[RMDB]
Chemical mapping of a 177-nucleotide RNA with DMS and 2A3. 2A3 adducts were read by reverse transcription with SuperScript II with manganese. It was measured as part of the RMDB library M2PK50. The RNA was probed in 150 mM KOAc, 10 mM MgCl2 and 150 mM bicine (pH 8.5) at 24 C.

RNA sequence: GGGAACGACUCGAGUAGAGUCGAAAAUACCGCGUCUUCGGACGCGGUAAGAUCCCGUCCGAAAACCUGAGAGACGGAGAUGAAGAGACUCAAGCUACGCAAUGACUGCCGGAUUCGUCCGGCAGAAACAAGUAUGAGUCUUCGGACUCAUACUUGUAAAAGAAACAACAACAACAAC
Reactivity to DMS in 0.01 (KOAc 150mM, MgCl2 10mM, bicine 150mM(pH8.5), 24C), signal-to-noise 2, nucleotides 027 to 126: u000a020c000c000g010c000g000u000c020u010u010c200g000g020a040c030g040c010g000g010u000a000a030g010a100u000c010c000c000g020u010c040c010g010a060a050a110a080c060c050u010g010a130g000a110g000a080c060g010g000a060g010a070u000g000a080a060g000a130g000a100c050u000c020a040a100g000c130u000a060c110g020c120a100a090u010g000a230c000u000g010c000c010g000g000a030u020u000c180g000u000c010c000g000g010c000a010g010a020a100
Reactivity to 2A3 in 0.01 (KOAc 150mM, MgCl2 10mM, bicine 150mM(pH8.5), 24C), signal-to-noise 1, nucleotides 027 to 126: u020a020c000c000g050c020g060u000c010u030u060c140g080g010a010c070g000c040g000g000u000a010a010g000a020u000c040c000c020g030u030c040c030g130a060a070a130a120c010c000u140g020a080g000a000g000a120c030g040g010a110g000a040u060g080a090a090g080a000g030a030c020u000c120a030a040g030c060u170a040c070g020c120a050a140u200g000a140c010u020g000c000c010g000g000a040u050u020c100g060u070c040c000g130g000c000a000g000a000a000